[RMDB]
Notes
Structure probing data (DMS and 2A3) for a 177-nucleotide construct. In probing experiments dimethyl sulfate is read out at A N1 and C N3, which are open when not base-paired.
RNA sequence: GGGAACGACUCGAGUAGAGUCGAAAAUUAAAUAGCGUAAUCGACAUUGAGAAUGUACGCUAAGUGUGUGUUGUAAGGGCAACGUCCAAUUGAACACACACACAGUUGGACCUAAUGUCGAAAAAAAGAACACAUGGAGGUUCGCCUCCAUGUGUUCAAAAGAAACAACAACAACAAC
Reactivity to DMS in 0.01 (KOAc 150mM, MgCl2 10mM, bicine 150mM(pH8.5), 24C), signal-to-noise 1, nucleotides 027 to 126: u010u000a050a060a190u000a000g000c020g000u000a060a090u000c020g020a010c020a020u000u020g000a050g010a050a060u020g000u010a000c020g010c000u010a050a070g000u000g010u000g000u000g000u020u010g020u000a090a120g000g010g000c030a150a150c300g000u020c020c000a050a030u000u000g000a080a070c150a050c010a000c000a000c010a060c090a050g000u000u000g010g000a110c020c050u010a000a000u000g000u000c000g030a000a000a060a100a020a070a140
Reactivity to 2A3 in 0.01 (KOAc 150mM, MgCl2 10mM, bicine 150mM(pH8.5), 24C), signal-to-noise 2, nucleotides 027 to 126: u150u110a040a010a070u070a000g010c000g020u060a030a050u040c020g000a010c010a010u020u070g040a030g050a140a150u080g000u050a000c000g000c000u000a040a040g000u020g000u000g000u000g000u000u110g150u180a030a050g110g000g000c110a240a140c140g050u050c030c020a030a050u050u160g060a070a010c010a010c000a000c000a000c010a010c000a000g130u130u190g100g030a020c010c000u020a020a000u000g000u030c030g060a090a030a000a000a000a000a000